[RMDB]
RNA sequence: GGGAACGACUCGAGUAGAGUCGAAAACUUUAGAAGUAUAAUGAACAAAGUGGGUCUAGCAUCAGUAAGUCUUCAGUGUAAAUUUCAGAUCCACUGUUCAGGAUCUGAAAAGAAAAAUGAGCAUGGCUAGUAUAUGGAGGUUCGCCUCCAUAUACUAAAAAGAAACAACAACAACAAC
Reactivity to 2A3 in 0.01 (KOAc 150mM, MgCl2 10mM, bicine 150mM(pH8.5), 24C), signal-to-noise 7, nucleotides 027 to 126: c050u140u150u160a070g040a170a020g050u110a040u070a260a110u130g060a060a030c050a050a160a070g040u110g030g020g040u010c010u060a020g040c010a040u090c030a030g070u130a160a070g040u030c060u060u060c050a040g030u010g050u170a080a120a150u050u060u020c010a000g010a000u000c000c000a030c050u040g030u060u050c020a020g000g000a000u000c000u040g040a020a040a010a030g150a000a040a010a020a020u160g010a020g040c080a040u050g040g010c020
Reactivity to DMS in 0.01 (KOAc 150mM, MgCl2 10mM, bicine 150mM(pH8.5), 24C), signal-to-noise 6, nucleotides 027 to 126: c030u000u010u020a100g010a130a110g010u020a060u020a140a090u020g000a090a050c050a030a110a090g020u010g000g010g000u000c030u000a060g020c060a050u020c050a040g000u010a050a060g000u010c050u010u000c050a070g010u010g000u020a050a070a090u000u020u000c030a020g000a000u000c000c000a080c120u020g010u020u000c100a080g010g010a050u000c010u000g000a020a000a020a080g010a030a070a050a100a100u010g020a070g010c090a060u010g000g020c150